An RNA of 177 nucleotides, treated with DMS and 2A3 and read out base by base. DMS adducts were read by reverse transcription with MarathonRT. The reactions ran in a buffer of 150 mM KOAc, 10 mM MgCl2 and 150 mM bicine (pH 8.5), at 24 C.
[RMDB]
RNA sequence: GGGAACGACUCGAGUAGAGUCGAAAAUGUCAAGUACUGGCGGUGGAGAGUAGGCUGAUUUGUAAUUUCAAAUAUUGGGAAAGAUAAAUCCUUUGUAGACGACUUAACUACAGAACGGGGUGUUGUAACAAAAGUUAACUUUCGAGUUAACUUUUGUAAAAGAAACAACAACAACAAC
Reactivity to DMS in 0.01 (KOAc 150mM, MgCl2 10mM, bicine 150mM(pH8.5), 24C), signal-to-noise 7, nucleotides 027 to 126: u010g000u010c040a080a100g000u010a060c070u000g010g010c020g000g020u010g000g010a080g010a070g020u000a060g000g020c070u020g000a050u010u000u010g000u010a060a130u010u010u000c040a050a070a100u020a100u030u020g010g010g000a040a040a060g010a100u010a050a070a070u010c010c040u000u010u010g010u000a020g000a160c120g000a060c160u010u020a050a100c020u000a010c020a050g000a060a090c120g000g000g010g010u010g000u000u000g010u010a070
Reactivity to 2A3 in 0.01 (KOAc 150mM, MgCl2 10mM, bicine 150mM(pH8.5), 24C), signal-to-noise 7, nucleotides 027 to 126: u140g030u030c030a020a070g030u030a090c070u060g020g000c020g010g060u080g010g050a060g000a020g040u090a050g020g040c050u040g060a070u010u040u050g080u040a100a140u050u100u100c050a050a060a030u190a130u150u100g040g020g030a060a080a030g060a060u120a070a120a040u040c010c010u070u040u070g020u010a030g010a040c040g010a010c060u080u070a080a000c000u050a030c030a040g040a170a040c070g030g010g000g010u030g010u020u010g020u020a030